[RMDB]
RNA sequence: GGGAACGACUCGAGUAGAGUCGAAAAUAGCUUCAUUCGAGGUGCUUGGACGCGUGCCGGUCAUAGCGAGUGGUUCAGUUGUGUCUGGAGUGGAGUAACUUGUGGACUGGAAGUAAACGCUGUCACCGCAGUGCUAUACUUUCGAGUAUAGCACUGCAAAAGAAACAACAACAACAAC
Reactivity to 2A3 in 0.01 (KOAc 150mM, MgCl2 10mM, bicine 150mM(pH8.5), 24C), signal-to-noise 4, nucleotides 027 to 126: u130a030g000c020u040u000c010a120u020u080c070g010a030g040g040u060g070c020u060u070g110g010a020c040g000c000g100u070g060c040c000g060g000u040c070a080u150a110g030c000g010a020g040u060g070g060u090u020c030a060g010u050u040g100u050g060u110c020u060g070g010a050g020u030g020g020a080g040u040a020a060c040u040u060g040u080g050g000a030c030u040g060g000a050a020g050u150a020a120a020c030g020c080u040g030u040c010a040c100c070
Reactivity to DMS in 0.01 (KOAc 150mM, MgCl2 10mM, bicine 150mM(pH8.5), 24C), signal-to-noise 2, nucleotides 027 to 126: u020a080g000c030u000u000c050a040u000u000c040g000a040g000g020u010g010c070u020u010g000g000a040c060g020c020g010u000g000c010c000g010g000u000c030a080u020a150g000c030g000a030g040u010g010g000u000u020c080a100g000u010u010g000u000g000u000c030u020g040g000a090g000u020g020g010a040g000u010a060a030c030u020u000g020u020g000g000a020c010u000g020g010a070a080g010u020a090a060a090c050g010c000u010g020u000c010a050c070c070
Chemical mapping of a 177-nucleotide RNA with 2A3 and DMS. The data come from the RNA Mapping Database (RMDB), library OK1LIB. For DMS the reverse transcriptase was MarathonRT. For 2A3, 2,958 sequencing reads were counted. Conditions: 150 mM KOAc, 10 mM MgCl2 and 150 mM bicine (pH 8.5), 24 C. 2A3 adducts were read by reverse transcription with SuperScript II with manganese. High 2A3 reactivity points to a flexible backbone, as in loops and unpaired stretches.